An RNA of 177 nucleotides, treated with DMS and read out base by base. It was measured as part of the RMDB library TTRINS.
RNA sequence: GGGAACGACUCGAGUAGAGUCGAAAAGAUAUGGAGCCACGGCUGCUAGACGAAUGAGGUCACAAUAUUCGGAAACGAAUAUUGUGACCUCACUAUCUAGAACUACAGUCAGCGUGGCUCCUAAGUCCGGUAUAGAUCUGUUCGCAGAUCUAUACCGAAAAGAAACAACAACAACAAC
Reactivity to DMS in 0.01 (KOAc 150mM, MgCl2 10mM, bicine 150mM(pH8.5), 24C), signal-to-noise 2, nucleotides 027 to 126: g000a040u000a300u010g000g000a010g020c000c000a010c000g010g030c010u000g000c030u010a020g000a030c170g020a130a100u000g000a010g000g010u000c000a000c010a000a000u000a000u000u000c020g010g010a100a120a290c000g030a000a000u000a010u000u000g020u000g000a000c000c000u000c000a000c020u000a220u000c010u000a010g020a130a090c140u010a300c080a060g000u000c120a110g020c100g030u000g000g000c000u000c010c000u010a000a080g000u010c030